[RMDB]
RNA sequence: GGGAACGACUCGAGUAGAGUCGAAAAGAUAUGGACGUCAUGGAGUUCAAUGAUGUGGGUCGGAAACGACCCAUUGAGAACCCAUACGUCCUAAGUCAAAAUCACAAUGUCUUCGGACAUUGUGAAAGAUUCUACAGACCUUCGGGUCUGUAGAAUCAAAAGAAACAACAACAACAAC
Reactivity to 2A3 in 0.01 (KOAc 150mM, MgCl2 10mM, bicine 150mM(pH8.5), 24C), signal-to-noise 1, nucleotides 027 to 126: g020a000u020a040u110g020g000a010c020g000u080c220a060u020g020g000a300g120u110u070c160a280a300u230g080a010u070g000u000g000g030g030u010c020g040g000a050a050a090c010g000a000c070c070c020a000u000u000g020a010g010a000a000c010c030c000a000u010a010c020g020u000c000c000u010a090a000g010u000c030a150a000a030a300u050c010a000c010a000a000u010g020u000c000u080u080c300g140g010a000c000a000u010u000g000u000g000a030a000a000
Reactivity to DMS in 0.01 (KOAc 150mM, MgCl2 10mM, bicine 150mM(pH8.5), 24C), signal-to-noise 1, nucleotides 027 to 126: g000a040u000a300u000g000g030a000c000g020u000c300a020u010g010g010a150g000u010u000c000a250a170u020g000a210u000g010u000g040g000g000u000c020g000g000a100a080a280c000g010a020c010c000c000a020u000u000g000a170g020a010a010c040c000c000a010u010a000c000g000u000c000c000u000a000a090g020u000c010a100a150a200a210u020c000a010c000a000a010u000g000u000c000u000u010c220g020g000a020c000a010u000u000g000u010g020a000a040a070
Structure probing data (2A3 and DMS) for a 177-nucleotide construct. For DMS, 891 sequencing reads were counted. Conditions: 150 mM KOAc, 10 mM MgCl2 and 150 mM bicine (pH 8.5), 24 C. The data come from the RNA Mapping Database (RMDB), library TTRDES. DMS adducts were read by reverse transcription with MarathonRT.